The record gives the reactivity of an RNA of 177 nucleotides to DMS.
[RMDB]
RNA sequence: GGGAACGACUCGAGUAGAGUCGAAAAGAUAUGGAUCUUUGGCUACAAUGACCCAAGUGGGAGCUACUGGUCGGAAACGACCAGGUAGCGCGAAACCAUGGGUCAUUGUAGCCAAAGAUCCUAAGUCGAGUAGUAGUAACUUCGGUUACUACUACUCAAAAGAAACAACAACAACAAC
Reactivity to DMS in 0.01 (KOAc 150mM, MgCl2 10mM, bicine 150mM(pH8.5), 24C), signal-to-noise 2, nucleotides 027 to 126: g030a150u010a300u000g000g020a000u000c000u030u000u000g000g000c000u010a000c010a020a000u000g000a020c000c010c020a060a100g020u000g050g000g010a300g010c000u010a020c000u000g000g020u000c000g000g020a110a110a260c050g000a000c000c000a020g000g010u010a000g030c020g050c200g000a100a150a180c010c050a100u000g000g000g010u010c000a000u000u000g010u000a000g000c010c000a000a000a020g010a010u000c010c000u000a020a120g020u000c140